[RMDB]
RNA sequence: GGGAACGACUCGAGUAGAGUCGAAAAUAUCUUUUAUAAGGAACUUUUAGUGUACCUUUUCUAUGUUUAGAUACACAAGUACUUACCAUUGUGUUACAGUUACCUACAUUAUUCAGGGCAGUAACAUGCUGUACAGGUUAAUAGCCUAGGAGCAAUACGAUUGGUCUGUUUUCGAACAGACCAAUCGAAAAGAAACAACAACAACAAC
Reactivity to 2A3 in 0.01 (KOAc 150mM, MgCl2 10mM, bicine 150mM(pH8.5), 24C), signal-to-noise 1, nucleotides 027 to 156: u040a000u140c020u030u140u110u140a280u210a210a050g040g090a170a110c070u260u300u180u300a110g000u180g020u020a090c000c170u080u040u160u000c110u080a000u120g070u000u210u040a040g000a020u090a090c000a000c000a000a040g000u000a040c080u240u090a080c060c070a090u040u160g020u000g070u000u040a070c000a000g000u040u090a130c000c000u130a150c000a240u160u120a090u300u300c070a000g040g000g000c020a020g040u000a000a000c000a020u040g000c000u000g040u110a000c000a020g000g040u020u000a130a000u040a200g070c000c000u000a060g000g070a110g130c020a000a000u070a060

This 207-nucleotide RNA was probed chemically with 2A3. Values cover nucleotides 27 to 156.